An RNA of 177 nucleotides, treated with 2A3 and DMS and read out base by base. Values are in units of 0.01, from 0 to 300, in steps of 10. Source: RMDB library TTRDES, as collected in RNAgym. 2A3 adducts were read by reverse transcription with SuperScript II with manganese.

RNA sequence: GGGAACGACUCGAGUAGAGUCGAAAAGAUAUGGACGCUAGUAGGGAGCUCACAUUCGGAAACGAAUGAGAGCGUUGAUCUACAGGGCGUCCUAAGUCAAAUCGCAUUCUCUUCGGAGAAUGCGAAACUAUUGUCUAUCCUUCGGGAUAGACAAUAGAAAAGAAACAACAACAACAAC
Reactivity to 2A3 in 0.01 (KOAc 150mM, MgCl2 10mM, bicine 150mM(pH8.5), 24C), signal-to-noise 3, nucleotides 027 to 126: g020a010u060a030u170g010g000a000c000g000c020u020a030g010u010a010g000g020g040a020g000c000u000c010a090c000a020u000u020c000g020g000a040a050a040c010g000a000a000u060g020a070g010a000g130c010g020u070u020g000a010u000c000u000a000c020a110g230g130g000c000g010u000c000c000u000a010a000g010u010c020a010a020a190u040c000g000c000a020u000u000c000u000c000u000u090c300g160g000a010g000a000a000u000g000c000g000a000a000a000
Reactivity to DMS in 0.01 (KOAc 150mM, MgCl2 10mM, bicine 150mM(pH8.5), 24C), signal-to-noise 6, nucleotides 027 to 126: g010a030u010a300u000g000g010a020c010g030c010u000a110g000u010a010g000g000g000a030g010c000u000c000a180c000a010u000u000c000g000g000a120a080a220c010g010a020a010u000g010a090g000a010g020c000g010u000u020g010a030u010c000u000a000c000a140g010g010g000c000g000u000c000c000u000a010a080g000u000c040a110a120a180u000c000g010c000a010u000u000c000u000c000u000u020c210g020g010a020g000a010a000u000g010c000g010a000a020a100

Annotation: Conditions: 150 mM KOAc, 10 mM MgCl2 and 150 mM bicine (pH 8.5), 24 C.